[RMDB]
RNA sequence: GGGAACGACUCGAGUAGAGUCGAAAAUCGGUGGGGUUCGCCCCACCGAAAAGACAGAAGUGAGAGAGUCGUCAGUGAACGAAAGUGCGAUCCCACGCCACAAAAGAUGCGGCUUCGGCCGCAUCAACUUAGAUGAUCUCUUCGGAGAUCAUCUAAGAAAAGAAACAACAACAACAAC
Reactivity to 2A3 in 0.01 (KOAc 150mM, MgCl2 10mM, bicine 150mM(pH8.5), 24C), signal-to-noise 2, nucleotides 027 to 126: u010c000g000g000u010g010g010g000g020u040u020c100g100c000c000c020c010a010c010c000g010a000a000a000a000g010a010c010a020g150a180a020g120u180g100a130g020a020g010a010g120u010c010g000u010c020a050g080u060g300a170a100c090g050a110a010a030g130u060g040c000g010a030u000c000c000c010a000c010g020c010c010a020c000a030a110a030a030g010a000u010g000c000g030g000c020u060u100c200g060g000c010c000g040c010a000u000c000a000a000
Reactivity to DMS in 0.01 (KOAc 150mM, MgCl2 10mM, bicine 150mM(pH8.5), 24C), signal-to-noise 2, nucleotides 027 to 126: u000c020g040g010u000g000g020g020g050u010u010c220g030c000c000c000c000a000c030c000g010a000a010a060a170g000a070c030a060g010a110a150g020u000g000a140g020a300g000a040g000u000c010g010u000c070a110g010u010g000a060a040c090g000a050a030a040g010u010g020c030g010a110u010c000c000c000a200c040g010c030c030a110c110a050a050a080a080g010a000u000g000c000g010g020c000u000u000c150g020g000c000c010g020c000a000u000c000a020a090
This 177-nucleotide RNA was probed chemically with 2A3 and DMS. The data come from the RNA Mapping Database (RMDB), library M2PK50. The RNA was probed in 150 mM KOAc, 10 mM MgCl2 and 150 mM bicine (pH 8.5) at 24 C. 2A3 is a SHAPE reagent: it acylates the 2'-hydroxyl of flexible nucleotides of all four kinds. For DMS the reverse transcriptase was MarathonRT.